Record summary
Structure probing data (2A3) for a 207-nucleotide construct. The 2A3 profile rests on 752 reads. The reactions ran in a buffer of 150 mM KOAc, 10 mM MgCl2 and 150 mM bicine (pH 8.5), at 24 C. Reactivities are given for positions 27 through 156.
[RMDB]
RNA sequence: GGGAACGACUCGAGUAGAGUCGAAAAGGAUCGGUAGGUGGGCCUACCGAUCCAAACCACUGGAGACAGUGGAAAGUCUAAGACCUUGUUACCGGCAAACAAGGAUGAAUGGAGGUAGCGUGCACCUCCAUACUUAGAAAAGCCGGAAGCACGCAAGCCCUAUCCCACUGUUCGCAGUGGGAUAGGGAAAAGAAACAACAACAACAAC
Reactivity to 2A3 in 0.01 (KOAc 150mM, MgCl2 10mM, bicine 150mM(pH8.5), 24C), signal-to-noise 1, nucleotides 027 to 156: g010g000a010u000c010g000g000u000a000g000g150u270g170g110g020c000c000u000a000c000c000g000a000u000c000c000a000a000a000c000c000a010c010u000g000g030a070g010a060c000a000g000u010g020g000a000a110a000g010u000c010u030a030a040g000a060c000c000u030u000g000u030u030a070c050c040g080g050c030a020a080a000c000a030a000g010g070a080u120g130a230a090u000g040g000a000g020g000u020a010g050c010g000u000g010c010a000c010c000u020c000c000a000u000a000c020u030u000a000g000a040a030a010a000g110c000c000g030g010a000a000g010c000a000c010g020c000a010a010g060